[RMDB]
RNA sequence: GGGAACGACUCGAGUAGAGUCGAAAAUUAGCAUGCCAUUUAGCCCUCCAUGUAAUUCUUCUGUUUAUUCUUGUCACACUGAUGAGAAGUCAAUGCUGCCCCUUGGAGAUCCGAAAGCUGUUGCAGCCUACGAGUUGCAGUUCGCUGCAACUCGUAGAAAAGAAACAACAACAACAAC
Reactivity to DMS in 0.01 (KOAc 150mM, MgCl2 10mM, bicine 150mM(pH8.5), 24C), signal-to-noise 2, nucleotides 027 to 126: u020u000a090g010c060a040u000g000c050c040a070u000u010u000a130g020c020c020c010u000c040c020a040u000g040u000a100a070u000u010c070u020u000c100u010g010u000u000u010a110u040u000c010u000u000g030u000c010a160c140a110c140u010g000a050u000g000a040g010a050a050g040u000c120a070a060u000g010c040u000g010c000c020c050c050u000u000g010g000a080g010a080u000c090c010g000a050a070a110g020c050u000g020u000u000g050c050a020g000c040
An RNA of 177 nucleotides, treated with DMS and read out base by base. For DMS, 1,437 sequencing reads were counted. It was measured as part of the RMDB library OK2TRN. For DMS the reverse transcriptase was MarathonRT.